[RMDB]
RNA sequence: GGGAACGACUCGAGUAGAGUCGAAAAAGCUUAUUAUUAUUAUUUUGAGAUGGAGUCUAGCUCUGUCACCCAAGCUGGAGUGCAGUGGGGCAAUCUUGGCUCACUGCAACCUGCGCCUCCCAGGUUCAAUUCAAUACCCAUUCGUGGGUAUUGAAUUAAAAGAAACAACAACAACAAC
Reactivity to 2A3 in 0.01 (KOAc 150mM, MgCl2 10mM, bicine 150mM(pH8.5), 24C), signal-to-noise 1, nucleotides 027 to 126: a030g020c100u140u080a130u080u080a100u120u080a150u140u140a180u300u300u180u210g080a170g010a020u030g020g000a000g020u040c100u180a010g070c000u000c010u010g010u060c020a020c020c000c020a020a010g030c020u020g000g040a220g140u030g000c020a000g010u010g000g000g020g060c020a040a080u100c150u110u060g110g150c000u020c000a010c000u000g030c010a000a000c030c000u010g050c070g030c000c010u030c060c010c010a010g020g010u060u080c030
Reactivity to DMS in 0.01 (KOAc 150mM, MgCl2 10mM, bicine 150mM(pH8.5), 24C), signal-to-noise 2, nucleotides 027 to 126: a080g010c080u010u040a110u010u000a130u010u000a260u000u010a190u020u010u000u010g000a180g000a080u010g020g000a040g010u000c140u010a120g010c000u000c030u010g010u010c000a150c030c030c000a060a050g030c010u000g040g010a140g040u000g010c010a000g020u000g000g010g010g000c000a040a110u000c210u000u000g000g010c000u000c000a010c020u000g000c030a010a000c000c010u000g000c060g040c090c050u010c000c020c020a140g010g010u000u000c120
Structure probing data (2A3 and DMS) for a 177-nucleotide construct. DMS adducts were read by reverse transcription with MarathonRT. The DMS profile rests on 1,277 reads.